The data come from the RNA Mapping Database (RMDB), library OK1LIB. Chemical mapping of a 177-nucleotide RNA with 2A3 and DMS.
RNA sequence: GGGAACGACUCGAGUAGAGUCGAAAAGGGUUGUGCCCAAGAAAAUCGACGCUUCUGGGAAACAAAAGUGGCGUCUCGUAGUUGACUUCCGUAAGUUGAACGAGAAGACUAUCGAUGACAAAUACCCUGAGAGUGUAGAGUUCGCUCUACACUCUCAAAAAGAAACAACAACAACAAC
Reactivity to 2A3 in 0.01 (KOAc 150mM, MgCl2 10mM, bicine 150mM(pH8.5), 24C), signal-to-noise 4, nucleotides 027 to 126: g020g020g010u000u030g040u140g140c000c020c020a010a010g110a020a070a000a040u150c040g020a020c010g020c030u060u020c020u090g010g030g070a190a140a000c050a050a120a040a000g040u040g060g000c050g000u020c000u010c010g020u020a060g050u100u180g110a080c010u040u030c050c020g070u050a110a140g070u100u100g120a120a020c020g010a060g010a260a010g010a020c000u000a000u160c050g040a030u080g010a000c040a010a070a050u110a090c000c000c000
Reactivity to DMS in 0.01 (KOAc 150mM, MgCl2 10mM, bicine 150mM(pH8.5), 24C), signal-to-noise 4, nucleotides 027 to 126: g020g020g000u000u000g010u010g030c010c040c000a130a060g020a030a010a120a040u000c040g010a070c300g000c010u010u000c040u000g000g020g020a270a050a130c040a000a110a030a070g010u040g040g010c300g000u000c000u000c070g000u010a040g030u000u010g040a100c000u000u000c050c040g000u030a060a090g070u040u010g020a160a100c030g010a110g000a010a040g000a050c040u000a080u040c030g020a020u000g000a110c100a110a100a060u040a070c000c030c000